[RMDB]
Structure probing data (DMS and 2A3) for a 170-nucleotide construct. Conditions: 150 mM KOAc, 10 mM MgCl2 and 150 mM bicine (pH 8.5), 24 C. DMS adducts were read by reverse transcription with MarathonRT. Reactivities are rounded to 0.1 and cut off at 0 and 3. It was measured as part of the RMDB library 15KLIB.

RNA sequence: GGGAACGACUCGAGUAGAGUCGAAAAUAAUAUAGCUAAAAACGCCUAUGAGAAGGAUAAGGCAGUGGCCCGUAAGUUAGAACGUAUGGCUGAUCAGGCUAUGACUUCUAUGUAUAAGCAAGCACGUAUAGCAUUUGGUUCGCCAAAUGCAAAAGAAACAACAACAACAAC
Reactivity to DMS in 0.01 (KOAc 150mM, MgCl2 10mM, bicine 150mM(pH8.5), 24C), signal-to-noise 6, nucleotides 027 to 129: u010a080a120u030a070u020a070g000c070u020a010a050a050a100a110c130g020c090c040u050a090u080g000a070g000a080a110g020g010a070u000a050a090g000g000c020a000g000u000g000g000c030c020c030g000u050a040a050g000u000u000a000g040a060a060c120g000u020a070u030g000g000c030u040g000a100u070c150a060g000g030c030u020a060u040g020a060c060u000u000c040u000a060u050g020u000a050u020a010a010g020c070a020a020g000c080a010c130g000u030a070u000a050
Reactivity to 2A3 in 0.01 (KOAc 150mM, MgCl2 10mM, bicine 150mM(pH8.5), 24C), signal-to-noise 6, nucleotides 027 to 129: u190a070a030u110a010u040a080g040c030u080a000a000a060a030a040c050g020c010c000u060a090u160g070a050g040a140a020g040g020a050u050a100a060g030g000c020a000g020u020g030g010c020c010c000g040u040a020a020g060u030u070a010g020a040a020c070g050u040a020u040g000g000c000u010g040a220u180c060a040g040g000c000u020a020u100g070a040c000u000u000c010u040a060u100g130u000a100u030a120a030g020c050a030a010g010c020a000c080g060u100a030u110a150